[RMDB]
Conditions: 150 mM KOAc, 10 mM MgCl2 and 150 mM bicine (pH 8.5), 24 C. Chemical mapping of a 207-nucleotide RNA with DMS and 2A3. 2A3 adducts were read by reverse transcription with SuperScript II with manganese.

RNA sequence: GGGAACGACUCGAGUAGAGUCGAAAAAGUGUUUUUUAAGUAUAUUCAUAAGGUUGUGCAACCAUCACAACACAAAGUUCUUUGGAACAAUGUAUAAUUGUCUUUUAAAAAGUCUAUCCUGUUAGUGGAAAGUUUUCAACACGGAUUUUUCGCUGUGCAGUCACUAUACUUUCGAGUAUAGUGACUGAAAAGAAACAACAACAACAAC
Reactivity to DMS in 0.01 (KOAc 150mM, MgCl2 10mM, bicine 150mM(pH8.5), 24C), signal-to-noise 1, nucleotides 027 to 156: a120g010u010g000u000u000u000u010u010u030a020a140g010u000a130u010a070u010u000c050a100u010a100a130g030g010u010u010g000u000g030c090a120a180c180c030a130u000c050a040c000a040a020c000a100c070a040a060a290g010u010u010c040u020u010u000g010g000a040a050c020a080a160u000g000u010a140u000a090a090u010u010g010u000c020u000u000u000u010a010a050a080a050a120g010u000c050u000a170u000c020c020u000g010u000u000a080g040u000g020g010a030a010a100g050u000u000u010u010c030a000a060c060a040c080g020g010a140u010u020u000u000u000c000g040c020u000g000u000g020
Reactivity to 2A3 in 0.01 (KOAc 150mM, MgCl2 10mM, bicine 150mM(pH8.5), 24C), signal-to-noise 1, nucleotides 027 to 156: a000g110u050g000u030u020u020u030u080u160a030a040g040u070a190u010a040u130u190c010a070u080a300a080g080g000u000u000g000u000g040c080a190a110c000c040a060u250c000a000c000a030a000c010a000c020a100a040a010g030u030u000c000u130u150u280g100g000a000a000c000a020a040u010g030u070a040u040a210a150u020u070g040u030c010u010u090u070u160a000a090a000a080a000g020u020c020u000a070u080c020c000u050g000u100u040a020g000u000g080g000a070a040a040g030u030u050u010u270c070a080a050c040a020c030g040g000a040u000u040u040u200u300c060g000c010u020g010u040g070
The 2A3 profile rests on 349 reads.